[RMDB]
Chemical mapping of a 207-nucleotide RNA with DMS and 2A3. Reactivities are given for positions 27 through 156. Conditions: 150 mM KOAc, 10 mM MgCl2 and 150 mM bicine (pH 8.5), 24 C. For DMS the reverse transcriptase was MarathonRT. It was measured as part of the RMDB library M2RFPK.
RNA sequence: GGGAACGACUCGAGUAGAGUCGAAAAGCGUAACGGCUGGGUGUAACCCAAAUCUAGGUGUGCUGAUUAGCGGGCUUGACUCCGUAACAAAUAGGCACUGGUGGUAAAAAGCAUCCCACCUACUCACAAAGCUCCAAAUUCUUCGGAAUUUGGAGAAUCAAUAGUUGUUGUUCGCAACAACUAUUGAAAAAGAAACAACAACAACAAC
Reactivity to DMS in 0.01 (KOAc 150mM, MgCl2 10mM, bicine 150mM(pH8.5), 24C), signal-to-noise 3, nucleotides 027 to 156: g010c050g030u010a100a110c090g030g030c030u000g010g030g030u000g000u000a070a240c000c010c020a060a110a090u000c030u010a150g000g050u010g040u000g030c010u000g000a110u010u010a140g030c040g030g020g000c050u010u000g000a120c090u010c010c000g030u000a100a140c090a060a080a080u000a100g000g000c000a030c000u000g000g020u000g030g010u000a020a040a070a070a180g010c050a110u000c040c000c020a040c060c000u010a030c050u000c060a110c090a040a080a160g010c010u000c010c000a010a010a030u000u040c000u000u010c300g060g020a020a010u010u000u000g010g010a020g010a010a030
Reactivity to 2A3 in 0.01 (KOAc 150mM, MgCl2 10mM, bicine 150mM(pH8.5), 24C), signal-to-noise 6, nucleotides 027 to 156: g030c020g030u060a040a070c040g050g010c060u030g020g030g020u070g050u080a110a130c010c000c030a070a070a000u160c100u100a070g090g010u040g000u010g090c010u020g040a120u050u060a030g010c010g010g000g030c040u130u180g030a090c050u010c050c000g010u020a040a020c020a040a060a050u140a060g030g000c020a010c040u010g030g000u040g010g010u050a130a140a060a020a020g020c010a030u070c020c000c000a010c000c020u050a100c030u050c040a080c030a050a120a010g040c000u000c000c000a000a000a000u000u020c010u030u050c150g090g000a000a000u000u000u000g000g000a000g000a000a020